[RMDB]
RNA sequence: GGGAACGACUCGAGUAGAGUCGAAAAGAUAUGGACCUUGUACACCAUCGAUCUAAUUCGGAAACGAAUUAGGGAGGUGUUACACUGGGUCCUAAGUCAAACGCCGCGCAGUUCGCUGCGCGGCGAACCAUACCACCAUCUUCGGAUGGUGGUAUGGAAAAGAAACAACAACAACAAC
Reactivity to DMS in 0.01 (KOAc 150mM, MgCl2 10mM, bicine 150mM(pH8.5), 24C), signal-to-noise 1, nucleotides 027 to 126: g000a050u010a300u030g000g010a020c000c000u030u020g020u000a080c030a010c040c000a300u020c110g000a070u080c000u000a000a000u000u000c000g000g010a130a030a140c040g030a000a010u000u000a000g010g000g000a110g060g000u020g030u010u000a010c030a060c300u010g000g000g030u020c000c000u000a000a100g000u000c030a170a220a160c010g030c000c060g010c000g000c000a030g030u000u010c150g020c030u000g020c000g060c000g030g020c020g020a030a030
Reactivity to 2A3 in 0.01 (KOAc 150mM, MgCl2 10mM, bicine 150mM(pH8.5), 24C), signal-to-noise 1, nucleotides 027 to 126: g020a030u060a070u110g010g000a000c000c000u050u100g000u040a000c010a010c000c020a120u300c020g010a010u060c000u010a000a020u000u010c000g000g070a060a090a020c000g000a000a000u000u000a000g000g030g000a010g000g010u010g000u040u070a020c060a020c130u100g020g010g000u040c000c020u020a050a010g000u020c050a130a130a130c040g020c030c020g060c020g070c050a040g020u140u240c290g180c210u030g000c040g050c000g000g010c000g000a010a010